[RMDB]
RNA sequence: GGGAACGACUCGAGUAGAGUCGAAAAAAGUGAAAUGCAUAACAGAGGAGGACUGGCCAUUUCACAUUGGCUGUGCACCUAGCAGCAGGUACACGUGAAUCUGCUGUUACUGCGUUCUGAUCUCUCAGAGAGACAGGAGUGACGCAGAGCGUUACAGUGAGAGGGACUAAUUCGUUAGUCCCUCUCAAAAAGAAACAACAACAACAAC
Reactivity to DMS in 0.01 (KOAc 150mM, MgCl2 10mM, bicine 150mM(pH8.5), 24C), signal-to-noise 3, nucleotides 027 to 156: a040a120g020u020g010a050a040a030u000g000c050a140u010a060a090c030a100g010a160g010g010a100g040g030a150c080u010g020g060c170c010a090u000u000u030c040a040c070a180u010u010g010g010c010u000g040u000g000c020a130c050c050u010a060g000c040a040g010c020a050g030g000u000a060c070a100c150g040u000g000a080a080u000c030u000g010c000u000g010u000u000a050c030u000g040c010g020u010u010c020u000g000a100u000c000u000c030u000c130a190g010a200g010a020g020a090c040a060g010g010a150g070u000g000a010c020g000c000a030g000a120g010c030g030u020u000a020c050a150g040
Reactivity to 2A3 in 0.01 (KOAc 150mM, MgCl2 10mM, bicine 150mM(pH8.5), 24C), signal-to-noise 5, nucleotides 027 to 156: a010a000g030u030g010a030a030a000u030g010c050a050u090a290a090c030a030g070a070g100g020a030g040g050a020c030u030g030g030c050c000a020u020u020u030c040a030c020a060u050u150g090g000c010u000g020u030g030c050a030c040c020u000a010g000c000a000g010c010a000g010g020u050a030c120a030c140g100u110g070a040a030u020c000u000g010c000u000g000u010u020a020c010u010g000c000g020u080u060c010u030g290a300u030c010u000c000u000c050a080g110a020g000a000g000a170c000a020g030g060a080g110u160g030a000c010g010c000a000g000a010g020c050g030u050u090a010c010a040g140

The record gives the reactivity of an RNA of 207 nucleotides to DMS and 2A3. For DMS the reverse transcriptase was MarathonRT. The RNA was probed in 150 mM KOAc, 10 mM MgCl2 and 150 mM bicine (pH 8.5) at 24 C. Values cover nucleotides 27 to 156. The 2A3 profile rests on 4,264 reads.